[RMDB]
RNA sequence: GGGAACGACUCGAGUAGAGUCGAAAAGAUAUGGAUAGCGAGGAUCAUUGGGUACGUUGAAAUCGGAAACGAUGGAGUACAGAUGGGAGCUAUCCUAAGUCAAAAGGUAAAACUUCGGUUUUACCAAGUUGAUAAUUAGGUUCGCCUAAUUAUCAACAAAAGAAACAACAACAACAAC
Reactivity to DMS in 0.01 (KOAc 150mM, MgCl2 10mM, bicine 150mM(pH8.5), 24C), signal-to-noise 7, nucleotides 027 to 126: g000a030u000a300u010g010g010a010u000a010g010c010g000a110g030g000a040u000c010a020u000u010g010g030g010u000a000c010g020u010u000g010a090a120a020u000c010g020g000a090a070a190c010g010a030u000g000g000a100g010u000a010c010a300g000a020u000g000g000g000a070g020c010u010a000u010c000c000u000a010a080g010u010c050a090a090a110a070g000g000u000a010a010a000a010c010u000u010c220g020g000u000u000u000u000a000c000c000a040a030
Reactivity to 2A3 in 0.01 (KOAc 150mM, MgCl2 10mM, bicine 150mM(pH8.5), 24C), signal-to-noise 8, nucleotides 027 to 126: g030a030u080a040u150g010g000a000u000a000g000c020g070a300g080g010a030u030c020a030u040u090g300g120g010u010a010c010g130u240u090g020a050a030a000u010c010g010g030a040a030a030c010g010a000u010g000g030a020g010u010a000c010a020g020a000u000g000g010g010a010g000c000u000a000u010c000c000u000a040a010g050u020c060a030a040a070a120g000g000u010a010a010a000a010c020u080u160c300g110g000u000u000u000u010a000c010c000a000a020